Chemical mapping of a 177-nucleotide RNA with 2A3. 2A3 adducts were read by reverse transcription with SuperScript II with manganese. High 2A3 reactivity points to a flexible backbone, as in loops and unpaired stretches. For 2A3, 792 sequencing reads were counted. The reactions ran in a buffer of 150 mM KOAc, 10 mM MgCl2 and 150 mM bicine (pH 8.5), at 24 C. It was measured as part of the RMDB library OK2TRN.

[RMDB]
RNA sequence: GGGAACGACUCGAGUAGAGUCGAAAAACGAUCGCUGUGGCCUCGCACUGACGGCCGCGGCCCAGUACUGCGCGGAUCGUACUGGCCUGGCGCGUACAGGUACCGAUCAGCGCGAUCGUACGUAGUAGCGGGAAGCACCAUUCGUGGUGCUUCCCGCAAAAGAAACAACAACAACAAC
Reactivity to 2A3 in 0.01 (KOAc 150mM, MgCl2 10mM, bicine 150mM(pH8.5), 24C), signal-to-noise 1, nucleotides 027 to 126: a010c040g030a060u070c050g130c040u070g010u010g070g000c040c050u070c000g060c070a150c200u160g050a000c000g000g080c050c000g000c000g000g000c090c000c000a000g010u080a080c020u100g050c020g040c050g040g030a080u040c030g040u080a060c050u120g050g020c000c000u030g010g060c180g020c070g160u140a100c030a010g040g030u050a110c040c010g000a010u050c020a030g010c010g020c000g030a060u100c010g010u030a040c090g040u070a000g030u050a000